RNA sequence: GGGAACGACUCGAGUAGAGUCGAAAAAGCGAUUGCUGCCCCGCAUGAUGGGAAAUGUAGACACCUGAAAGGGAGGAAUGCUUGCUCGUUUCACCUCCUGCCGGCCAUUGCUGUAGUGCGCCGUUAAAGGACAAGUGCAAUUCGUUGCACUUGUCCUAAAAGAAACAACAACAACAAC
Reactivity to 2A3 in 0.01 (KOAc 150mM, MgCl2 10mM, bicine 150mM(pH8.5), 24C), signal-to-noise 1, nucleotides 027 to 126: a000g110c070g100a170u070u210g000c040u080g010c000c010c020c040g000c030a110u190g000a090u110g020g000g050a030a050a000u020g010u030a070g040a070c010a000c040c010u000g070a160a000a010g040g010g010a030g020g040a140a040u110g070c000u080u110g000c010u050c030g040u010u040u030c110a130c000c020u050c000c030u010g060c010c000g020g000c030c010a030u000u170g000c110u090g000u090a050g000u000g090c100g000c040c010g010u050u090a190a080
Reactivity to DMS in 0.01 (KOAc 150mM, MgCl2 10mM, bicine 150mM(pH8.5), 24C), signal-to-noise 1, nucleotides 027 to 126: a020g020c030g040a170u010u010g020c060u010g000c020c050c020c160g030c090a010u000g020a050u000g050g010g000a040a050a050u000g000u000a060g010a150c100a060c060c020u000g000a080a100a160g020g000g000a080g020g000a120a100u000g000c110u000u020g000c100u000c030g030u000u000u000c020a060c040c010u000c000c020u000g000c130c040g030g040c020c040a020u000u020g040c080u000g000u000a030g030u010g000c220g000c040c030g020u000u000a030a060
Annotation: The data come from the RNA Mapping Database (RMDB), library OK2TST. This 177-nucleotide RNA was probed chemically with 2A3 and DMS. The RNA was probed in 150 mM KOAc, 10 mM MgCl2 and 150 mM bicine (pH 8.5) at 24 C.